[RMDB]
RNA sequence: GGGAACGACUCGAGUAGAGUCGAAAAUUGGAGGUUCGCCUCCAAAUAGGGGGGUCCGUGCCUGAGGCAAGGACAUGAGCUGAAGCCUCCACGGCUCAACAGCCUUGCUACCCACCAGGCGGACGGAGGCACCCAACCAGUGGAAUUCGUUCCACAAAGAUGGUACUUUAUUCGUAAAGUACCAUCUAAAAGAAACAACAACAACAAC
Reactivity to DMS in 0.01 (KOAc 150mM, MgCl2 10mM, bicine 150mM(pH8.5), 24C), signal-to-noise 2, nucleotides 027 to 156: u010u000g010g020a030g050g040u040u000c260g090c030c000u000c010c000a010a030a080u000a180g000g010g040g030g020g030u000c020c020g010u020g000c020c000u010g000a140g000g000c000a000a060g000g020a030c060a240u000g000a030g030c000u000g020a020a130g010c030c000u000c050c060a290c070g000g040c010u000c000a090a100c110a110g000c000c010u000u000g000c010u000a020c050c010c030a300c070c000a030g000g020c000g030g020a010c020g030g020a040g010g030c000a110c020c020c010a060a070c040c080a170g040u000g010g000a040a090u000u000c150g030u000u010c010c000a000c010a040a150
Reactivity to 2A3 in 0.01 (KOAc 150mM, MgCl2 10mM, bicine 150mM(pH8.5), 24C), signal-to-noise 4, nucleotides 027 to 156: u050u020g010g000a030g000g050u120u160c160g030c010c010u030c000c000a050a060a030u190a040g010g000g000g000g000g000u000c010c020g040u120g080c010c010u010g010a020g000g000c000a000a010g030g010a050c100a230u180g000a020g020c000u020g010a140a010g060c020c010u030c030c020a030c030g020g020c000u000c010a070a170c080a060g020c010c010u010u010g010c000u040a070c000c000c010a050c030c010a010g010g000c000g000g040a010c000g000g000a020g000g030c030a070c000c010c000a010a060c020c030a060g010u000g010g040a030a010u110u080c150g050u110u010c000c000a010c000a010a090